Source: RMDB library OK2TST, as collected in RNAgym. This 177-nucleotide RNA was probed chemically with 2A3 and DMS. For 2A3 the reverse transcriptase was SuperScript II with manganese. For 2A3, 3,476 sequencing reads were counted. The DMS profile rests on 3,326 reads. Conditions: 150 mM KOAc, 10 mM MgCl2 and 150 mM bicine (pH 8.5), 24 C.
[RMDB]
RNA sequence: GGGAACGACUCGAGUAGAGUCGAAAAGUAAUAAACCGUGCAAAGGAUCUUCUAAAAUCUCUCAUGGAAAACGUCAUACCAGAUAGCAAAGAGAUAAGCGAUAUGGUCGAGUCUGAAGUAAAGUCCACACACUGAAUCUAUUCGUAGAUUCAGUGUGAAAAGAAACAACAACAACAAC
Reactivity to 2A3 in 0.01 (KOAc 150mM, MgCl2 10mM, bicine 150mM(pH8.5), 24C), signal-to-noise 3, nucleotides 027 to 126: g050u050a030a160u080a170a080a040c060c030g050u060g010c050a110a080a050g050g020a040u030c030u140u010c030u140a090a090a100a160u020c040u000c000u020c030a060u060g050g000a020a080a040a040c030g070u030c040a030u050a110c000c020a010g040a120u060a030g030c030a090a070a030g040a020g000a050u050a090a000g040c020g010a020u020a030u120g060g030u010c020g000a030g000u000c040u080g020a050a000g040u090a110a060a010g030u010c020c000a010
Reactivity to DMS in 0.01 (KOAc 150mM, MgCl2 10mM, bicine 150mM(pH8.5), 24C), signal-to-noise 4, nucleotides 027 to 126: g020u000a090a110u000a090a070a110c060c020g030u000g000c130a070a120a130g000g010a050u010c030u000u000c090u010a070a090a070a060u010c030u000c030u000c050a080u010g010g000a040a050a070a060c110g030u010c080a100u010a120c080c060a050g010a070u000a100g030c060a060a070a050g000a100g000a070u010a050a130g030c030g000a040u010a030u010g020g000u000c060g000a030g000u000c030u000g020a050a110g000u000a060a030a110g000u000c020c060a190